[RMDB]
RNA sequence: GGGAACGACUCGAGUAGAGUCGAAAACAUGACCCCCAACCUCUGGGGCGCCAUGCCCCCCGGCUAUGCACCGCAGAUGCCCCCCGCGUGGCCGCCCGUGAGCGACUCAGCUGGCCCGAGUGCUGCGACUUUUCCUGUAUUUCGAUACAGGAAAAGUAAAAGAAACAACAACAACAAC
Reactivity to DMS in 0.01 (KOAc 150mM, MgCl2 10mM, bicine 150mM(pH8.5), 24C), signal-to-noise 4, nucleotides 027 to 126: c030a030u010g010a100c030c020c010c020c010a060a130c210c170u010c140u000g020g010g000g010c120g020c020c020a000u000g000c020c000c010c010c010c030g000g020c040u010a070u000g010c030a090c130c070g000c030a060g010a140u010g010c010c030c020c010c020c040g010c050g030u000g010g030c040c020g000c020c030c060g010u010g010a060g030c040g000a080c040u010c060a070g000c030u000g010g010c050c020c040g000a090g020u000g000c010u000g000c080g010
Structure probing data (DMS) for a 177-nucleotide construct.
The RNA was probed in 150 mM KOAc, 10 mM MgCl2 and 150 mM bicine (pH 8.5) at 24 C.